RNA sequence: GGGAACGACUCGAGUAGAGUCGAAAAGCUGGCGUCUUUCGUCGGUAUAGUUGAUAGUGACUAAGGCCCGAACCUAAGCCGCACUCCGGAACAUACCGAUCAGGUCUGCUUACGAUUGUGGGCCUAGGGAAGACUUCGACUUCGGUCGAAGUCUUCCAAAAGAAACAACAACAACAAC
Reactivity to 2A3 in 0.01 (KOAc 150mM, MgCl2 10mM, bicine 150mM(pH8.5), 24C), signal-to-noise 1, nucleotides 027 to 126: g000c010u010g000g000c010g130u120c290u180u300u250c080g040u000c080g000g040u130a170u100a210g000u000u020g220a130u080a300g050u000g160a020c030u090a000a100g000g000c000c000c000g030a000a030c000c000u000a000a000g020c010c020g180c090a000c060u120c010c030g020g030a120a040c090a040u080a080c050c000g050a020u150c090a000g000g020u000c090u020g040c000u030u030a050c050g130a140u000u230g030u120g010g000g000c000c000u080a080g000

Chemical mapping of a 177-nucleotide RNA with 2A3. Source: RMDB library OK1LIB, as collected in RNAgym. 2A3 adducts were read by reverse transcription with SuperScript II with manganese.